[RMDB]
RNA sequence: GGGAACGACUCGAGUAGAGUCGAAAACAUGUACCCUUCGGGGUACAUGAACAUAACGCGGGCGUGGGACACCGCCGGAGCUAGCCUCAGAUAGUCCCAGAAUUAGGUGCGCCUUCGGGCGCACCAACUACAGGAUAAUAUUCGUAUUAUCCUGUAGAAAAGAAACAACAACAACAAC
Reactivity to 2A3 in 0.01 (KOAc 150mM, MgCl2 10mM, bicine 150mM(pH8.5), 24C), signal-to-noise 2, nucleotides 027 to 126: c000a000u010g000u000a000c000c020c000u040u070c230g050g000g030g010u020a000c000a000u000g000a000a000c020a080u200a130a060c090g010c020g010g030g000c130g150u030g000g000g000a000c010a010c010c010g010c030c070g070g000a010g010c050u090a030g050c020c000u010c010a010g020a130u090a050g010u000c000c000c000a000g060a020a090u240u180a030g000g000u000g000c110g020c060c040u040u120c300g080g030g000c040g010c000a000c000c000a000a000
Reactivity to DMS in 0.01 (KOAc 150mM, MgCl2 10mM, bicine 150mM(pH8.5), 24C), signal-to-noise 2, nucleotides 027 to 126: c000a000u000g010u010a010c010c000c000u000u020c190g030g010g010g000u000a000c000a000u000g000a090a120c130a080u000a110a100c230g000c030g000g010g040c090g030u010g010g030g010a010c030a070c020c020g000c030c130g020g000a030g000c040u000a080g010c110c000u000c040a100g000a120u000a090g000u000c000c000c000a140g000a140a120u000u000a050g030g030u020g000c000g000c000c020u000u020c130g000g010g000c000g000c000a010c000c010a000a050
The record gives the reactivity of an RNA of 177 nucleotides to 2A3 and DMS. It was measured as part of the RMDB library M2PK50. For DMS the reverse transcriptase was MarathonRT. Reactivities are given for positions 27 through 126. The RNA was probed in 150 mM KOAc, 10 mM MgCl2 and 150 mM bicine (pH 8.5) at 24 C.